[RMDB]
RNA sequence: GGGAACGACUCGAGUAGAGUCGAAAACGCCGCCACGAGGAAACGGGAGCGCUCCAGGCAGGCCCGUUGGACCCGCCGCGUGGGACCGCGCAGCGGGCGAGGCGCGCCGCGGCAGCCCCGAGGAGAGUGAUAUCAAGAUGUUCGCAUCUUGAUAUCAAAAAGAAACAACAACAACAAC
Reactivity to 2A3 in 0.01 (KOAc 150mM, MgCl2 10mM, bicine 150mM(pH8.5), 24C), signal-to-noise 5, nucleotides 027 to 126: c050g040c000c010g030c020c020a080c050g080a090g050g080a110a050a030c030g010g020g010a100g050c070g010c020u050c030c010a050g090g050c050a050g070g000c020c050c000g010u020u020g010g030a060c000c000c000g000c010c010g010c010g000u040g010g140g120a090c170c050g000c000g000c000a010g000c000g000g000g000c010g010a020g000g000c000g000c020g000c000c000g010c010g020g000c020a020g020c000c000c000c010g020a060g020g050a070g000a020g050
Reactivity to DMS in 0.01 (KOAc 150mM, MgCl2 10mM, bicine 150mM(pH8.5), 24C), signal-to-noise 5, nucleotides 027 to 126: c110g010c030c020g020c020c010a080c080g010a140g010g010a090a110a100c040g000g000g000a090g010c050g040c050u010c030c080a160g020g040c030a160g000g000c010c070c010g020u010u000g000g020a300c010c000c000g020c010c000g020c000g020u000g010g000g010a100c190c070g000c010g010c000a090g020c010g000g000g000c040g000a300g020g000c020g040c300g020c070c020g000c040g010g000c070a110g000c020c000c010c050g010a090g000g000a080g020a130g020